The record gives the reactivity of an RNA of 207 nucleotides to 2A3.

[RMDB]
RNA sequence: GGGAACGACUCGAGUAGAGUCGAAAAGUAAGUCAUAUCAUAUGGUGUGCGGAAGGGGAAUUUUACUCUGUAACUCACAAGUCUCUCCUUUACUCAAGUCGACUCAAAACCUCCUCGUGGUGGUCCCCGGUAAUGCUAAACUUGUUUAGCAGCUAAUGUCUUUAGUUCUGUUCGCAGAACUAAAGACAAAAGAAACAACAACAACAAC
Reactivity to 2A3 in 0.01 (KOAc 150mM, MgCl2 10mM, bicine 150mM(pH8.5), 24C), signal-to-noise 3, nucleotides 027 to 156: g040u070a060a050g070u160c020a000u040a010u050c020a040u050a170u300g010g000u020g020u020g020c050g060g050a020a020g000g030g010g040a000a010u040u120u070u150a060c010u080c120u070g070u050a120a120c060u120c150a030c010a070a070g030u000c000u000c000u000c050c020u020u040u020a010c020u000c010a050a000g020u000c000g000a000c010u010c040a040a100a200a290c030c050u090c010c010u010c000g070u090g010g040u020g000g020u000c000c000c000c020g000g080u120a130a040u030g000c000u000a010a010a030c070u100u060g010u070u100u010a000g000c010a000g000c010u040a070a070u070